[RMDB]
RNA sequence: GGGAACGACUCGAGUAGAGUCGAAAACCGUUCUUGUGUUAUUCGCUAAGCGAUUACCUAAGCUCAGCGAUUGUCAAACAGAACGUAGAUUAACUGCCGCUAAUCACUCCACAAUGUUGAGCCGACUCAACAUAGCAUAAUUCGUUAUGCUAUGUUGAAAAGAAACAACAACAACAAC
Reactivity to DMS in 0.01 (KOAc 150mM, MgCl2 10mM, bicine 150mM(pH8.5), 24C), signal-to-noise 9, nucleotides 027 to 126: c110c010g010u000u000c020u010u020g020u000g010u000u010a050u000u000c010g010c000u000a050a020g010c000g000a160u020u010a130c170c130u010a130a240g000c010u000c030a010g010c010g010a000u000u010g010u010c150a060a110a040c050a030g000a020a010c020g010u010a060g010a120u000u010a060a090c070u010g010c050c050g010c050u010a050a050u010c030a110c040u000c030c040a060c130a070a070u010g000u010u000g010a090g010c160c020g010a190c160u010
Reactivity to 2A3 in 0.01 (KOAc 150mM, MgCl2 10mM, bicine 150mM(pH8.5), 24C), signal-to-noise 9, nucleotides 027 to 126: c020c000g000u010u000c050u130u170g030u010g060u100u180a060u050u020c000g000c000u010a020a020g000c020g090a100u070u200a140c020c040u090a100a020g000c000u000c020a000g000c000g010a010u000u050g060u040c060a080a080a060c010a020g010a010a000c010g040u070a060g020a130u090u100a060a050c040u060g030c010c010g000c030u030a060a050u060c010a020c050u010c020c010a050c030a110a140u110g020u040u040g020a030g030c020c010g050a040c020u000